[RMDB]
RNA sequence: GGGAACGACUCGAGUAGAGUCGAAAAGUCGUCUUAUCUCGAUUGGUAACGCUGAGAAUCAACGUCAGUUAGUCCAGAUGGGUGUCAAAGCGAACAAGCGUUGGUUUUCUAUCAAGGACAAGAAGACGAGACACGACCAUCGACUCCUUGACGGACACUGUUGGAGAACCUUCGGGUUCUCCAACAGAAAAGAAACAACAACAACAAC
Reactivity to 2A3 in 0.01 (KOAc 150mM, MgCl2 10mM, bicine 150mM(pH8.5), 24C), signal-to-noise 1, nucleotides 027 to 156: g000u000c000g030u010c090u170u230a090u000c000u060c040g200a300u010u110g060g000u140a190a030c060g000c110u020g020a020g030a020a060u080c070a060a050c040g090u000c050a000g040u070u190a020g000u000c020c010a020g010a090u100g100g000g000u040g000u020c010a140a060a000g000c030g060a060a070c070a160a000g010c000g010u000u010g050g000u000u040u030u020c020u020a070u070c050a110a120g150g020a030c050a030a050g040a030a000g080a080c000g010a010g000a000c020a000c050g070a010c010c000a030u020c000g000a000c000u020c000c000u000u030g000a000c030g040g010a000c020a000
The data come from the RNA Mapping Database (RMDB), library OK3TST. Structure probing data (2A3) for a 207-nucleotide construct. Reactivities are given for positions 27 through 156. The RNA was probed in 150 mM KOAc, 10 mM MgCl2 and 150 mM bicine (pH 8.5) at 24 C.